[RMDB]
RNA sequence: GGGAACGACUCGAGUAGAGUCGAAAAGAUAUGGAUAUAUCCCAAUGGUUCGGUGACGACAACAGCCACCCGUCGGAAACGACGGUGUGGACAUGUCGAGCCGAACCAUUGGGAUAUAUCCUAAGUCCAAUAUGUUUUACUUCGGUAAAACAUAUUGAAAAGAAACAACAACAACAAC
Reactivity to DMS in 0.01 (KOAc 150mM, MgCl2 10mM, bicine 150mM(pH8.5), 24C), signal-to-noise 4, nucleotides 027 to 126: g000a120u010a300u010g000g000a020u010a010u010a000u010c000c000c000a000a000u000g010g020u000u000c000g030g000u000g030a300c060g000a030c010a040a120c300a200g010c000c000a000c010c000c000g030u010c000g000g000a180a140a220c000g000a010c010g020g010u000g040u000g010g000a020c130a070u010g010u000c000g030a300g010c000c000g000a000a000c000c000a000u000u010g000g010g000a000u000a000u000a000u000c000c000u010a000a040g020u000c060
The record gives the reactivity of an RNA of 177 nucleotides to DMS. Values cover nucleotides 27 to 126. The reactions ran in a buffer of 150 mM KOAc, 10 mM MgCl2 and 150 mM bicine (pH 8.5), at 24 C. For DMS, 3,322 sequencing reads were counted.